[RMDB]
RNA sequence: GGGAACGACUCGAGUAGAGUCGAAAACGCGCGUUCGCGCGCGGUCUCGCGUACUACAGCUUCAACAGCUUGCUAGUACCGAUAAGUCCCAAAUAGGACUUUUGACGGUACAAACAAGACAUGAAGCUGUAUCGCUCGCACGGUAUUUCGAUACCAAUCAGCAGAUAACAUUCGUGUUAUCUGCUGAAAAAGAAACAACAACAACAAC
Reactivity to DMS in 0.01 (KOAc 150mM, MgCl2 10mM, bicine 150mM(pH8.5), 24C), signal-to-noise 1, nucleotides 027 to 156: c000g100c000g040c000g000u000u000c260g030c060g110c000g050c010g000g000u000c050u000c080g000c030g000u010a080c130u000a020c020a010g010c000u000u000c000a020a110c030a240g000c020u010u000g030c030u000a300g000u000a020c000c000g020a150u000a020a050g000u000c000c010c010a050a220a200u010a030g020g000a040c000u000u000u020u010g000a200c080g010g000u000a020c000a060a090a030c000a010a000g000a050c020a300u000g020a040a000g050c000u000g000u000a000u020c040g000c040u000c100g000c030a130c080g010g020u000a200u000u000u000c130g000a170u000a030c010c020a120a300
Reactivity to 2A3 in 0.01 (KOAc 150mM, MgCl2 10mM, bicine 150mM(pH8.5), 24C), signal-to-noise 4, nucleotides 027 to 156: c000g000c010g010c020g010u060u100c300g020c010g010c020g000c000g170g020u010c030u020c010g030c010g000u070a140c060u000a000c030a000g000c000u000u020c020a110a060c030a240g040c000u000u000g000c010u040a030g000u000a000c000c000g010a000u030a080a000g010u000c030c050c010a060a140a020u280a090g000g000a020c010u210u000u080u180g250a180c030g020g000u020a020c020a020a130a030c000a040a000g060a060c020a120u050g000a010a000g000c000u000g000u000a000u020c010g000c010u080c050g040c020a120c120g000g000u020a020u020u300u170c290g110a030u030a030c020c000a010a110
About this RNA: The record gives the reactivity of an RNA of 207 nucleotides to DMS and 2A3. DMS adducts were read by reverse transcription with MarathonRT. 2A3 adducts were read by reverse transcription with SuperScript II with manganese. Conditions: 150 mM KOAc, 10 mM MgCl2 and 150 mM bicine (pH 8.5), 24 C.